[RMDB]
RNA sequence: GGGAACGACUCGAGUAGAGUCGAAAACAAAUUUGGAUAGCGAUGACAUCUUUUAAGAAAGACAAUUGUUUUCAAAGGGUUUCAAGUGCUAGUGCCUGUAAAAUAGCAUACACUCUUCAAACGGAUGUCUUCUGGAUCCAUUCGUGGAUCCAGAAGAAAAAGAAACAACAACAACAAC
Reactivity to DMS in 0.01 (KOAc 150mM, MgCl2 10mM, bicine 150mM(pH8.5), 24C), signal-to-noise 1, nucleotides 027 to 126: c100a010a120a230u000u000u040g000g000a140u020a020g000c060g010a080u000g010a060c040a050u020c030u020u010u000u020a110a110g000a050a070a010g010a010c050a110a110u000u050g020u060u000u000u040c240a100a080a030g020g000g000u000u010u000c040a050a090g020u000g000c000u000a030g020u000g000c080c110u030g020u010a100a010a000a010u030a010g000c030a110u000a040c130a040c000u000c040u000u000c120a020a080a060c100g000g000a000u060g000
Reactivity to 2A3 in 0.01 (KOAc 150mM, MgCl2 10mM, bicine 150mM(pH8.5), 24C), signal-to-noise 2, nucleotides 027 to 126: c010a010a030a060u200u090u120g130g000a060u120a070g050c010g080a070u030g010a070c020a050u030c010u000u110u070u130a180a090g150a070a020a000g070a010c000a070a010u100u070g000u020u060u020u010c060a030a000a030g100g000g010u050u000u110c090a040a040g010u010g090c010u010a000g010u030g060c020c040u030g080u080a000a050a000a240u110a020g000c000a000u040a100c010a020c010u000c030u130u130c030a060a060a020c020g070g020a020u100g040